[RMDB]
RNA sequence: GGGAACGACUCGAGUAGAGUCGAAAAAGCCAAUCCUUCGGGAUUGGCUACAGCAACGAAGCAAAGCAACGAGACAAGACGAGGAAAAGAUCGAGCAUGCUACACACCCCAUCUUCGGAUGGGGUAACCAUAAUUGUGUAUUCGUACACAAUUAUGGAAAAGAAACAACAACAACAAC
Reactivity to 2A3 in 0.01 (KOAc 150mM, MgCl2 10mM, bicine 150mM(pH8.5), 24C), signal-to-noise 9, nucleotides 027 to 126: a000g000c000c000a000a000u010c000c010u030u080c240g080g000g000a000u000u010g000g000c000u000a000c020a010g030c010a040a060c060g110a080a010g000c020a090a050a010g010c010a040a120c040g040a010g030a080c040a080a030g060a060c060g050a070g080g050a080a090a020a030g050a030u050c010g000a010g010c020a010u060g020c030u110a050c060a000c000a010c070c000c000c000a000u000c000u030u050c180g070g000a000u000g000g020g000g000u000a000a000
Reactivity to DMS in 0.01 (KOAc 150mM, MgCl2 10mM, bicine 150mM(pH8.5), 24C), signal-to-noise 8, nucleotides 027 to 126: a030g010c000c000a000a010u000c000c000u000u020c200g020g010g010a010u000u000g010g000c010u000a010c060a070g010c070a050a070c100g000a100a080g010c050a050a060a070g020c050a060a050c080g000a090g000a080c080a060a060g010a080c080g000a070g010g000a040a080a070a090g000a070u000c060g010a090g010c030a070u010g010c060u000a070c150a100c170a070c010c000c000c000a010u000c000u000u020c170g010g010a010u000g000g000g010g010u000a000a030
About this RNA: Structure probing data (2A3 and DMS) for a 177-nucleotide construct. Reactivities are given for positions 27 through 126. DMS adducts were read by reverse transcription with MarathonRT. It was measured as part of the RMDB library M2PK50.